[RMDB]
The record gives the reactivity of an RNA of 207 nucleotides to 2A3 and DMS.
For 2A3 the reverse transcriptase was SuperScript II with manganese.
The reactions ran in a buffer of 150 mM KOAc, 10 mM MgCl2 and 150 mM bicine (pH 8.5), at 24 C.
For 2A3, 7,381 sequencing reads were counted.

RNA sequence: GGGAACGACUCGAGUAGAGUCGAAAAGGGAAUGGUGGUUUACCCCGUUAUCAAAUGAUUACCGACCAAUAAUUGGCGAAACUCGUUUCGCGUUGGCUGCCUAAUUCCAGGAAUUAGCGUGCCUUCAAAGACAUCAAGAAGUUCGCUUCUUGAUGAAUCAUUAUAAACACUUCGGUGUUUAUAAUGAAAAAGAAACAACAACAACAAC
Reactivity to 2A3 in 0.01 (KOAc 150mM, MgCl2 10mM, bicine 150mM(pH8.5), 24C), signal-to-noise 8, nucleotides 027 to 156: g040g010g020a110a080u130g020g020u030g000g030u050u070u190a120c020c010c010c010g090u090u100a120u130c070a070a100a120u180g020a050u070u070a040c010c030g060a060c040c060a030a030u190a150a070u120u130g060g000c010g010a030a030a040c060u050c090g050u010u020u000c030g000c010g000u010u020g000g010c030u060g030c010c030u010a010a010u020u010c040c080a130g110g140a010a010u000u000a010g020c030g060u020g000c010c000u010u010c020a060a080a040g070a040c000a000u000c000a010a010g000a000a000g010u040u130c180g020c080u000u000c000u000u010g000a000u000g000a000a000
Reactivity to DMS in 0.01 (KOAc 150mM, MgCl2 10mM, bicine 150mM(pH8.5), 24C), signal-to-noise 5, nucleotides 027 to 156: g010g010g010a060a060u000g030g020u010g020g010u010u000u000a110c010c010c010c000g020u000u010a110u000c100a050a080a100u000g010a150u000u000a060c020c010g010a080c030c020a070a130u000a070a170u010u000g010g020c010g020a080a090a050c050u000c110g010u000u000u010c020g020c030g010u000u010g020g010c030u000g000c110c030u000a020a080u000u000c020c120a170g010g020a040a050u000u000a060g010c080g010u000g010c010c010u000u010c040a070a090a140g010a280c010a000u000c000a010a030g000a030a020g020u000u010c300g010c010u000u000c000u010u000g000a020u000g000a040a090